[RMDB]
RNA sequence: GGGAACGACUCGAGUAGAGUCGAAAACGAGAGAAAGGUGAAAAGGGAAAGCUGCGCUACUUGGAACUUAAUGGUGAGCAAAUGUCCUUGAUACCUGGAACUUCUGUUGAGUUGCAUUAUCAGGCUUUGAAAAAAGCAUGUCAGGAGAGUGUUCCACCAGCAUAGAAUAGUUCGCUAUUCUAUGCUGAAAAGAAACAACAACAACAAC
Reactivity to DMS in 0.01 (KOAc 150mM, MgCl2 10mM, bicine 150mM(pH8.5), 24C), signal-to-noise 4, nucleotides 027 to 156: c030g000a120g020a100g010a180a090a040g000g010u010g010a060a110a080a040g010g010g030a100a130a180g010c090u000g030c060g030c020u000a060c040u010u000g020g030a120a090c110u000u000a070a060u000g010g020u000g010a090g070c030a040a080a100u000g020u000c010c030u000u000g010a240u000a050c050c040u000g010g010a110a100c010u000u000c030u010g030u000u000g000a260g000u000u000g020c020a050u000u000a110u000c040a070g020g020c010u010u010u010g000a000a090a100a050a020a060g020c030a040u000g000u000c050a050g000g000a080g010a120g020u020g000u000u000c010c020a200c180
Reactivity to 2A3 in 0.01 (KOAc 150mM, MgCl2 10mM, bicine 150mM(pH8.5), 24C), signal-to-noise 6, nucleotides 027 to 156: c030g010a000g010a010g000a050a110a020g040g010u070g050a040a060a040a010g040g010g000a040a070a040g020c050u240g030c040g010c030u040a040c070u070u080g080g060a070a070c020u070u120a140a050u110g020g000u030g020a010g010c010a010a120a180u110g060u100c010c000u030u040g010a020u070a090c010c010u000g000g020a020a020c000u060u060c040u110g200u070u050g030a030g040u060u050g050c010a040u080u070a070u230c040a020g030g080c000u040u060u110g050a070a070a010a000a000a020g020c030a020u050g060u060c030a020g040g020a030g020a020g060u060g030u040u020c010c000a030c030